An RNA of 177 nucleotides, treated with 2A3 and read out base by base.
The RNA was probed in 150 mM KOAc, 10 mM MgCl2 and 150 mM bicine (pH 8.5) at 24 C.
RNA sequence: GGGAACGACUCGAGUAGAGUCGAAAAUUAUCAGUAGUAUAGUAAAUAAUAAGUGUACUUGAUAAGCAUAGAUUACAUAUAUAGUUCAAUGUUCUAUGUCAUUACUCAAAAUAUACUACUUAUUUACAGGUAGUAGUCACUUCGGUGACUACUACCUAAAAGAAACAACAACAACAAC
Reactivity to 2A3 in 0.01 (KOAc 150mM, MgCl2 10mM, bicine 150mM(pH8.5), 24C), signal-to-noise 2, nucleotides 027 to 126: u110u040a040u110c050a020g020u070a000g010u000a030u000a010g050u070a000a170a170u200a070a000u090a300a140g030u080g060u020a150c090u000u000g040a000u060a030a010g020c010a000u000a040g000a030u170u280a000c000a000u100a010u150a000u000a120g300u110u100c170a100a000u030g000u000u000c000u000a000u000g060u030c050a070u000u040a040c070u000c050a050a050a050a000u000a060u020a000c000u000a000c000u000u010a000u040u050u020a010c030

For 2A3, 539 sequencing reads were counted. Source: RMDB library OK1LIB, as collected in RNAgym.